[RMDB]
RNA sequence: GGGAACGACUCGAGUAGAGUCGAAAAGUGGCUAGGCACUUCCGCAUCGGCGGGGUCGUCUCGCAGGGUGCGCAGGAACAGCUCGGACAUCCGGGUAAUCACAGGCGGCUAGCCUAGUGGCGGUGCGACGGUAAUGCCCAUUCGUGGGCAUUACCGUAAAAGAAACAACAACAACAAC
Reactivity to DMS in 0.01 (KOAc 150mM, MgCl2 10mM, bicine 150mM(pH8.5), 24C), signal-to-noise 2, nucleotides 027 to 126: g000u000g000g010c000u000a010g000g010c040a070c070u000u020c050c020g000c000a110u000c100g020g000c000g000g000g000g020u000c170g000u120c050u000c030g000c050a130g020g020g000u030g000c030g090c230a160g000g010a020a120c170a180g000c020u000c000g000g000a190c260a300u110c020c020g000g000g050u000a030a010u030c130a080c300a100g010g000c090g020g000c000u000a220g020c010c020u000a160g010u020g000g000c000g070g000u030g000c000g030
Reactivity to 2A3 in 0.01 (KOAc 150mM, MgCl2 10mM, bicine 150mM(pH8.5), 24C), signal-to-noise 2, nucleotides 027 to 126: g140u040g000g040c020u020a030g060g020c000a010c000u060u080c050c000g050c030a110u180c070g050g000c040g010g220g030g040u160c120g090u040c020u040c040g000c020a060g000g140g170u070g000c020g000c060a020g010g030a060a100c050a010g000c020u020c000g000g030a050c040a060u200c000c000g040g000g000u140a020a010u100c070a100c040a120g010g020c000g050g000c030u050a010g000c010c010u060a030g000u000g010g040c020g000g070u040g000c000g000